[RMDB]
RNA sequence: GGGAACGACUCGAGUAGAGUCGAAAAAUGUAUCUUCGGAUACAUCGGCCGCGUACUACUGGUAGCUACUGGGAGUCUUGAUCCCAAAUAGGAUCACGUGGACAUCGAUCAGUAGAACUACUACCAGUAUCGCUUAGGAGGACCAUUCGUGGUCCAAUCUCUGCAUCAUGUUCGCAUGAUGCAGAGAAAAAGAAACAACAACAACAAC
Reactivity to 2A3 in 0.01 (KOAc 150mM, MgCl2 10mM, bicine 150mM(pH8.5), 24C), signal-to-noise 3, nucleotides 027 to 156: a000u020g000u010a000u020c020u010u030c250g090g000a000u010a000c000a000u020c010g170g050c020c020g000c040g040u090a080c010u000a000c000u020g010g000u000a010g000c000u000a000c000u010g040g030g010a040g040u020c020u050u100g060a010u060c090c130c000a090a100a100u160a080g000g000a000u020c000a010c240g170u180g010g000a000c030a240u160c050g100a090u090c010a000g020u010a030g010a020a010c090u140a010c000u000a000c060c010a000g000u010a020u080c000g000c000u000u150a130g030g110a040g020g000a030c000c000a030u040u100c300g100u100g020g000u020c000c020a020a040
Reactivity to DMS in 0.01 (KOAc 150mM, MgCl2 10mM, bicine 150mM(pH8.5), 24C), signal-to-noise 2, nucleotides 027 to 156: a020u000g040u000a000u010c010u010u020c300g020g000a030u000a000c010a010u000c000g010g010c040c020g050c040g040u000a070c010u010a020c000u000g010g010u000a020g020c000u000a110c000u000g000g010g000a050g050u000c030u030u000g000a040u000c000c000c010a000a090a120u000a040g020g020a020u000c000a120c300g060u010g010g000a030c030a180u000c250g000a130u020c010a020g020u000a030g050a090a050c050u020a300c020u040a030c000c000a020g010u000a000u000c040g010c010u000u000a080g060g000a140g010g010a070c000c010a080u000u000c170g040u000g010g010u000c000c000a090a100